[RMDB]
RNA sequence: GGGAACGACUCGAGUAGAGUCGAAAAAUCGGCUCUUUGUACUGCAUAGAGCAGCUCGCGGGACACCGGCGCGACGGCGCCAGUGGAACAACGAGUUACGGCGCUGCCGGGGUUGACGGCCCGCUAGAUACCGUACCAUGUUCGCAUGGUACGGUAUAAAAGAAACAACAACAACAAC
Reactivity to DMS in 0.01 (KOAc 150mM, MgCl2 10mM, bicine 150mM(pH8.5), 24C), signal-to-noise 3, nucleotides 027 to 126: a070u040c050g000g000c000u000c000u010u000u000g010u010a080c210u080g010c010a020u010a020g040a050g030c010a090g000c030u000c050g000c070g000g010g000a120c100a100c020c000g000g000c010g030c140g010a070c140g010g010c090g000c020c010a070g000u030g000g010a100a070c100a050a110c060g010a250g000u000u010a090c020g000g000c000g020c020u030g010c030c000g000g000g010g000u020u010g000a150c130g000g010c000c020c000g030c030u020a030g000
Reactivity to 2A3 in 0.01 (KOAc 150mM, MgCl2 10mM, bicine 150mM(pH8.5), 24C), signal-to-noise 3, nucleotides 027 to 126: a010u080c030g080g000c000u000c050u050u060u050g080u080a140c050u290g010c000a020u030a040g000a020g010c010a010g030c010u020c040g000c010g000g020g020a010c010a020c060c000g030g070c050g010c060g090a170c100g080g000c000g030c000c000a140g050u090g050g090a040a050c060a040a090c080g100a050g160u030u020a030c010g000g000c030g000c040u060g000c000c000g000g020g010g020u020u040g090a050c050g070g040c010c000c000g000c000u010a010g020

This 177-nucleotide RNA was probed chemically with DMS and 2A3. Conditions: 150 mM KOAc, 10 mM MgCl2 and 150 mM bicine (pH 8.5), 24 C. For DMS, 6,279 sequencing reads were counted. For 2A3 the reverse transcriptase was SuperScript II with manganese.